[RMDB]
RNA sequence: GGGAACGACUCGAGUAGAGUCGAAAACUGGGUAAAGGCCCCGGAUUAACGCCGAGUCAUGAUGACACGCUGAGCGGAAUGCUGCUGGCGGCCUGGUAUUAUGGCGCUUUAGAUGCGCGCUCCGGUCAUUUCCGUAGAAAUUCGUUUCUACGGAAAUAAAAGAAACAACAACAACAAC
Reactivity to 2A3 in 0.01 (KOAc 150mM, MgCl2 10mM, bicine 150mM(pH8.5), 24C), signal-to-noise 5, nucleotides 027 to 126: c010u060g010g030g080u130a120a110a100g080g010c020c010c000c000g010g010a040u120u110a110a010c020g000c010c030g000a020g010u020c020a040u130g140a050u120g010a040c010a020c080g030c060u090g070a020g010c010g020g170a230a140u220g090c040u040g000c010u020g050g050c000g010g000c000c030u020g000g000u050a060u110u070a060u090g040g000c010g020c020u120u090u090a140g020a140u210g030c000g000c000g000c030u000c010c010g000g040u020c010
Reactivity to DMS in 0.01 (KOAc 150mM, MgCl2 10mM, bicine 150mM(pH8.5), 24C), signal-to-noise 9, nucleotides 027 to 126: c030u000g010g010g010u000a060a100a090g010g010c060c040c020c010g000g010a070u000u000a110a090c070g000c020c030g010a110g010u000c020a070u000g010a080u010g010a050c040a090c100g000c050u000g000a070g020c010g010g010a160a100u010g010c050u000g020c050u000g010g010c050g000g020c040c050u000g010g010u010a040u000u000a060u000g000g010c010g010c080u000u010u010a120g010a140u010g010c030g010c020g010c190u000c010c010g000g000u010c110
Conditions: 150 mM KOAc, 10 mM MgCl2 and 150 mM bicine (pH 8.5), 24 C. An RNA of 177 nucleotides, treated with 2A3 and DMS and read out base by base. 2A3 adducts were read by reverse transcription with SuperScript II with manganese.